The record gives the reactivity of an RNA of 177 nucleotides to 2A3 and DMS. For DMS, 2,108 sequencing reads were counted. Values cover nucleotides 27 to 126. The RNA was probed in 150 mM KOAc, 10 mM MgCl2 and 150 mM bicine (pH 8.5) at 24 C. For 2A3 the reverse transcriptase was SuperScript II with manganese.
RNA sequence: GGGAACGACUCGAGUAGAGUCGAAAAAGCCGGUAAAUUAAAAUUGGAACUGGCACAAUUCGCAGAAUUAGAAGCUUUUGCACAAUUUGCUUCUGAUCUCGAUAAAGCUACUCAGAAUCAAUUGGCAAAUAGGUUAGAGAUUCGUCUCUAACCUAUUAAAAGAAACAACAACAACAAC
Reactivity to 2A3 in 0.01 (KOAc 150mM, MgCl2 10mM, bicine 150mM(pH8.5), 24C), signal-to-noise 6, nucleotides 027 to 126: a000g000c010c010g020g020u080a150a180a160u150u150a200a200a160a200u160u140g120g030a060a030c000u000g000g060c020a010c050a030a150u130u070c030g030c080a010g010a120a040u010u010a010g000a020a000g000c000u020u010u040u120g020c040a020c010a160a030u020u020u040g000c000u000u000c000u000g010a010u000c010u000c110g030a030u130a100a070a000g020c000u000a020c020u020c020a060g090a050a080u070c030a040a010u020u010g030g010c010a000
Reactivity to DMS in 0.01 (KOAc 150mM, MgCl2 10mM, bicine 150mM(pH8.5), 24C), signal-to-noise 1, nucleotides 027 to 126: a230g000c000c000g040g020u020a050a030a160u030u030a070a140a240a130u040u050g040g020a170a050c010u010g000g000c030a070c090a090a120u010u000c020g000c200a050g000a070a020u010u000a010g000a030a030g020c010u000u000u010u030g000c100a030c090a010a010u000u010u000g010c000u000u000c000u010g000a000u010c070u000c010g020a070u030a050a120a070g010c020u000a000c030u000c010a160g010a060a040u000c070a030a040u020u000g000g000c040a080